This 207-nucleotide RNA was probed chemically with DMS and 2A3. It was measured as part of the RMDB library M2RFPK. For 2A3 the reverse transcriptase was SuperScript II with manganese. For DMS, 2,373 sequencing reads were counted. DMS adducts were read by reverse transcription with MarathonRT.
RNA sequence: GGGAACGACUCGAGUAGAGUCGAAAAACGCUUCACAAUGUGCGGCAAAGAAACAUUGUUUAUGCAAAGGCACUUCGCAAUGUGUGCUCAAACAUUGCUUAUACAAACACGCUUCACAAUGUGCGACAAAACUUCACGGUCUUCGGACCGUGAAGAAGUUAUGAUAGCGGUUCGCCGCUAUCAUAACAAAAGAAACAACAACAACAAC
Reactivity to DMS in 0.01 (KOAc 150mM, MgCl2 10mM, bicine 150mM(pH8.5), 24C), signal-to-noise 1, nucleotides 027 to 156: a020c050g030c000u000u000c040a070c020a030a010u010g010u020g080c040g000g020c020a100a070a080g070a040a000a070c010a040u000u000g020u000u020u000a080u030g040c040a080a090a150g000g030c020a050c030u000u000c110g040c060a070a080u010g010u010g040u000g000c050u000c100a070a130a020c020a020u000u000g010c030u000u000a050u020a090c100a090a080a100c040a040c080g000c080u000u000c120a150c160a100a010u010g050u000g030c030g000a130c130a020a020a050a080c000u010u000c000a020c000g040g010u010c000u000u010c300g020g000a020c000c000g000u000g010a000a000g020a040a040
Reactivity to 2A3 in 0.01 (KOAc 150mM, MgCl2 10mM, bicine 150mM(pH8.5), 24C), signal-to-noise 8, nucleotides 027 to 156: a000c010g000c020u010u020c010a000c010a010a010u020g000u000g010c000g050g040c120a160a110a040g070a010a050a000c010a020u000u020g110u050u090u110a080u110g060c050a040a080a100g160g000c010a010c010u030u030c040g010c030a020a030u030g010u000g050u010g040c110u110c230a030a040a000c000a010u000u010g000c000u080u110a170u050a090c090a020a080a000c060a010c080g050c040u130u140c060a030c020a130a150u180g040u060g070c030g060a020c080a010a100a070a040c000u000u000c000a000c000g000g000u010c000u040u040c070g080g000a000c000c000g000u000g000a000a000g000a000a000